[RMDB]
Overview: Conditions: 150 mM KOAc, 10 mM MgCl2 and 150 mM bicine (pH 8.5), 24 C. Structure probing data (2A3 and DMS) for a 177-nucleotide construct.
RNA sequence: GGGAACGACUCGAGUAGAGUCGAAAAGAAACCGCCAAAGAUAGGCUGAGACAUCAUCUAGCAAGUUUAUCUAGUGGAGAUGGAGCUUAUCACAAGCCUACAGGGGGAGGUGCGAUCGAGGUUGCACUGCCUAGACGAGAUUCGUCUCGUCUAGGCAAAAAGAAACAACAACAACAAC
Reactivity to 2A3 in 0.01 (KOAc 150mM, MgCl2 10mM, bicine 150mM(pH8.5), 24C), signal-to-noise 1, nucleotides 027 to 126: g080a080a000a010c060c040g110c030c030a100a080a020g010a080u020a020g050g080c040u030g040a020g050a010c030a070u100c020a010u000c060u030a010g100c160a130a000g030u230u260u140a170u070c020u000a020g050u030g080g120a060g000a040u030g080g000a000g080c010u010u100a020u010c030a030c120a120a000g000c020c020u080a030c060a070g040g000g000g000g000a080g000g000u020g030c000g040a000u020c070g020a060g040g050u010u030g050c070a050c020
Reactivity to DMS in 0.01 (KOAc 150mM, MgCl2 10mM, bicine 150mM(pH8.5), 24C), signal-to-noise 2, nucleotides 027 to 126: g000a100a140a110c030c050g070c060c070a150a060a100g000a020u000a040g000g020c000u020g000a180g000a200c080a070u000c040a100u000c010u000a120g030c120a020a110g010u010u000u000a110u010c000u000a060g020u000g000g010a100g000a040u000g000g000a080g030c050u020u000a040u010c040a050c130a140a110g000c030c000u000a040c160a080g000g040g000g010g040a080g010g000u010g010c000g020a010u000c030g030a160g030g010u000u000g010c020a040c090
Source information:
For DMS the reverse transcriptase was MarathonRT. 2A3 adducts were read by reverse transcription with SuperScript II with manganese.